About this RNA:
The record gives the reactivity of an RNA of 177 nucleotides to 2A3. Conditions: 150 mM KOAc, 10 mM MgCl2 and 150 mM bicine (pH 8.5), 24 C. For 2A3 the reverse transcriptase was SuperScript II with manganese. For 2A3, 276 sequencing reads were counted.
RNA sequence: GGGAACGACUCGAGUAGAGUCGAAAAUGGAAAUCUCUCACGUGAAGGGUUUUGCACCACCUGAUGCCAUGAGGACGCAACUGAGGCAAAAUGUUGACUAUGUAAGGUGGGUCGACUGUGCUGCAGCAGUGCCGUCCAUCUUCGGAUGGACGGCACUAAAAGAAACAACAACAACAAC
Reactivity to 2A3 in 0.01 (KOAc 150mM, MgCl2 10mM, bicine 150mM(pH8.5), 24C), signal-to-noise 1, nucleotides 027 to 126: u210g000g000a020a020a020u000c000u000c000u120c000a010c100g000u000g030a260a190g040g090g000u050u130u130u030g060c060a000c030c000a000c020c020u070g020a070u150g030c000c000a040u220g010a210g000g000a000c060g020c010a090a300c180u100g060a010g010g000c000a060a030a030a030u070g030u010u070g040a030c070u300a030u210g030u060a190a120g240g000u250g130g120g000u000c020g000a000c070u120g030u100g090c000u000g030c030a030g000c000